[RMDB]
RNA sequence: GGGAACGACUCGAGUAGAGUCGAAAAAGCCGAGCACGAGUCGCAGACGCUAAAGUUUACGCUACGUCAAGACGGAUGUGACAGGGCGAUAGCAAGCCAAUGCUAUAGGCGAACGUACGAAAAGCGAUAUUUUAUAUAAAUUCGUUUAUAUAAAAUAAAAAGAAACAACAACAACAAC
Reactivity to DMS in 0.01 (KOAc 150mM, MgCl2 10mM, bicine 150mM(pH8.5), 24C), signal-to-noise 4, nucleotides 027 to 126: a150g010c010c000g020a170g010c060a060c040g000a230g000u010c030g010c070a200g000a180c060g020c090u010a030a170a150g000u020u030u040a110c070g010c030u020a090c030g000u010c060a070a100g000a110c060g010g010a090u000g010u000g000a060c070a140g010g000g000c020g020a040u010a050g000c020a020a020g010c080c300a140a120u000g000c020u000a030u010a090g000g010c030g000a080a070c040g020u010a060c040g000a090a070a070a060g000c050g010a180
Reactivity to 2A3 in 0.01 (KOAc 150mM, MgCl2 10mM, bicine 150mM(pH8.5), 24C), signal-to-noise 3, nucleotides 027 to 126: a000g000c000c020g010a020g000c010a010c050g030a040g020u000c000g010c070a020g020a060c020g020c060u120a140a100a020g040u050u110u160a070c030g010c010u040a020c040g030u030c020a010a000g110a060c030g010g040a050u090g030u030g020a030c020a040g120g000g000c010g020a070u030a020g000c020a060a010g010c000c010a010a050u030g000c000u000a020u040a050g030g000c010g020a070a030c040g070u100a020c040g100a010a050a060a060g020c020g000a010
The record gives the reactivity of an RNA of 177 nucleotides to DMS and 2A3. Reactivities are given for positions 27 through 126. 2A3 adducts were read by reverse transcription with SuperScript II with manganese. The data come from the RNA Mapping Database (RMDB), library OK1LIB.